[RMDB]
RNA sequence: GGGAACGACUCGAGUAGAGUCGAAAAUCAACAAUCAAGAAUGUACCAAAUACAUAAGGCCUGAUUUAGACUUGGAAUUGCUGAUAUUUUCUAUUUUCAGAGGUUCAAUAUGAAAUCCUUUUUAAACCAAAAUAUAGAAUCAUUGGCCCAUGACUGACGUAGGCGUAAAUUUCGAUUUACGCCUACGAAAAGAAACAACAACAACAAC
Reactivity to 2A3 in 0.01 (KOAc 150mM, MgCl2 10mM, bicine 150mM(pH8.5), 24C), signal-to-noise 2, nucleotides 027 to 156: u150c000a000a170c040a020a030u130c040a090a050g070a090a040u020g000u030a060c000c060a020a130a110u100a040c040a000u080a070a060g020g060c000c000u040g060a050u020u000u130a070g010a160c020u050u070g040g000a030a090u060u120g020c040u050g020a000u010a060u090u100u100u000c110u020a100u130u130u010u000c060a040g080a100g050g010u050u100c030a070a080u110a130u300g110a000a140a140u090c010c000u000u160u020u120u300a070a080a030c040c000a050a010a040a000u220a040u040a070g050a000a000u040c050a050u040u070g030g010c000c020c040a030u130g070a060c060u230g020a000
Reactivity to DMS in 0.01 (KOAc 150mM, MgCl2 10mM, bicine 150mM(pH8.5), 24C), signal-to-noise 1, nucleotides 027 to 156: u030c080a010a070c060a000a060u030c050a140a210g000a200a060u000g040u000a070c050c080a040a000a300u000a000c010a050u010a170a070g010g020c000c000u000g040a070u000u000u000a060g000a050c010u000u000g040g000a070a040u000u000g010c000u020g000a100u000a000u030u000u000u000c030u000a180u020u000u000u000c070a140g020a040g000g000u010u000c000a110a120u010a140u000g030a150a100a050u010c050c040u010u010u000u000u000a000a090a090c060c040a060a030a070a030u000a030u000a040g030a050a080u000c040a080u000u000g010g030c030c030c050a080u000g000a160c140u010g000a200
Record summary
Conditions: 150 mM KOAc, 10 mM MgCl2 and 150 mM bicine (pH 8.5), 24 C. Chemical mapping of a 207-nucleotide RNA with 2A3 and DMS. 2A3 adducts were read by reverse transcription with SuperScript II with manganese.